[RMDB]
Chemical mapping of a 177-nucleotide RNA with 2A3. It was measured as part of the RMDB library OK1LIB. Reactivities are given for positions 27 through 126. The reactions ran in a buffer of 150 mM KOAc, 10 mM MgCl2 and 150 mM bicine (pH 8.5), at 24 C.
RNA sequence: GGGAACGACUCGAGUAGAGUCGAAAAUUCGGAGGCAAAUGAUACUUGAUGACGAAUUGGAUCGUCGACAAACAGAUGUCCAUAACACUAUUCAUGCUUACCUCAUUAAAGAUUGGUCAAAUAAGGCGCGUACAGCAGCGUUCGCGCUGCUGUACGCAAAAGAAACAACAACAACAAC
Reactivity to 2A3 in 0.01 (KOAc 150mM, MgCl2 10mM, bicine 150mM(pH8.5), 24C), signal-to-noise 1, nucleotides 027 to 126: u070u090c000g050g030a010g000g070c040a000a050a140u070g010a110u030a170c100u020u020g030a040u010g130a050c090g050a150a210u020u070g050g050a080u100c010g100u080c000g000a060c050a000a190a000c120a050g030a000u000g000u000c030c000a000u010a050a070c110a010c040u130a110u050u050c000a000u070g000c000u000u120a080c000c000u000c130a030u000u190a010a010a050g150a090u090u180g110g000u010c000a000a120a240u070a090a120g010g010c030